[RMDB]
Structure probing data (DMS) for a 177-nucleotide construct. The RNA was probed in 150 mM KOAc, 10 mM MgCl2 and 150 mM bicine (pH 8.5) at 24 C. For DMS the reverse transcriptase was MarathonRT.

RNA sequence: GGGAACGACUCGAGUAGAGUCGAAAACUGUGGCUUAUCAGCGAGCCUACCUGCUGCACCCGUGAGCAUGGGCGGCCCCAUCUGCCUCCUCCUUCAGGUGAGAUGGCAGGAUCAGAGAGAUGGAAUGUAUGAGAAAGCUCUUCGGAGCUUUCUCAUAAAAAGAAACAACAACAACAAC
Reactivity to DMS in 0.01 (KOAc 150mM, MgCl2 10mM, bicine 150mM(pH8.5), 24C), signal-to-noise 1, nucleotides 027 to 126: c090u020g010u000g010g010c040u000u020a120u010c100a130g010c110g030a050g030c060c010u000a170c060c010u000g000c000u000g030c160a130c070c050c010g020u000g020a050g000c100a050u020g010g020g000c100g020g000c100c040c040c080a050u000c040u000g000c020c030u000c030c010u000c050c070u000u020c220a070g010g020u000g020a060g000a080u000g020g000c070a000g010g000a030u030c090a070g000a100g000a100g020a070u000g010g000a130a090u030g010